[RMDB]
RNA sequence: GGGAACGACUCGAGUAGAGUCGAAAAACGAAUCUGUCAGCGAAAGUAGCGCUGAGUCAACAGGAGUCAUGCGCCGGCCAAGAUCCAGAUUCGAAAACAGAUACAGAUACAGGUGAAGGUGCAGAUACGGAUUAAUCAGCUUCGGCUGAUUAAUCCGAAAAGAAACAACAACAACAAC
Reactivity to DMS in 0.01 (KOAc 150mM, MgCl2 10mM, bicine 150mM(pH8.5), 24C), signal-to-noise 1, nucleotides 027 to 126: a230c040g020a040a010u110c000u000g020u000c170a070g010c020g000a040a180a060g030u000a260g000c000g030c060u000g000a000g000u000c100a150a160c120a120g000g040a100g030u000c000a040u000g000c000g000c000c070g000g040c060c070a150a120g000a040u000c040c000a000g000a110u010u010c120g030a070a040a040a070c200a150g010a070u000a040c150a080g020a040u060a070c220a060g000g000u000g000a110a070g000g000u010g000c040a090g000a160u020a040
Reactivity to 2A3 in 0.01 (KOAc 150mM, MgCl2 10mM, bicine 150mM(pH8.5), 24C), signal-to-noise 1, nucleotides 027 to 126: a000c010g010a000a000u000c000u000g090u020c000a010g000c000g080a100a090a090g130u220a090g150c000g000c000u030g000a000g170u070c020a040a090c030a100g160g000a080g050u000c000a020u090g010c000g000c010c000g000g000c000c000a070a030g060a000u000c000c010a000g000a010u060u050c050g000a010a020a000a000c050a000g160a010u240a100c000a070g070a020u110a060c030a010g030g000u010g050a130a020g000g000u020g030c000a020g030a080u060a110